[RMDB]
The record gives the reactivity of an RNA of 177 nucleotides to DMS and 2A3. The RNA was probed in 150 mM KOAc, 10 mM MgCl2 and 150 mM bicine (pH 8.5) at 24 C.
RNA sequence: GGGAACGACUCGAGUAGAGUCGAAAAGAUAUGGAGGCUGUUACCCAUCGAUCUAUGUCCUUUCGGAAACGAAAGGAGCAUAGGGAGGGUUGCAGCCUCCUAAGUCAAAGUGUCGUUCGCGACACAAGGUAGGUAGUACCUUCGGGUACUACCUACCAAAAGAAACAACAACAACAAC
Reactivity to DMS in 0.01 (KOAc 150mM, MgCl2 10mM, bicine 150mM(pH8.5), 24C), signal-to-noise 1, nucleotides 027 to 126: g000a040u010a300u010g000g000a050g000g010c000u010g030u000u000a070c000c000c000a300u000c270g020a060u000c010u010a000u010g000u010c010c010u000u000u000c000g030g000a090a180a110c020g000a000a000a000g000g000a030g010c000a010u000a020g000g000g000a020g010g020g000u000u010g010c000a000g000c000c000u000c000c000u010a000a030g000u020c040a160a200a130g000u000g050u000c000g010u010u020c300g010c060g010a000c000a000c020a020a120
Reactivity to 2A3 in 0.01 (KOAc 150mM, MgCl2 10mM, bicine 150mM(pH8.5), 24C), signal-to-noise 1, nucleotides 027 to 126: g050a000u050a020u170g010g000a000g020g000c000u020g010u020u040a000c020c000c000a140u300c030g050a010u020c000u030a010u020g040u030c000c010u000u000u020c000g000g060a100a060a020c010g010a010a000a000g000g010a000g020c000a000u010a000g020g010g010a100g000g020g040u030u010g000c030a000g000c010c000u000c010c000u000a000a010g000u010c010a010a100a070g040u000g010u030c010g010u050u110c300g010c030g170a010c000a000c020a030a040
Values cover nucleotides 27 to 126.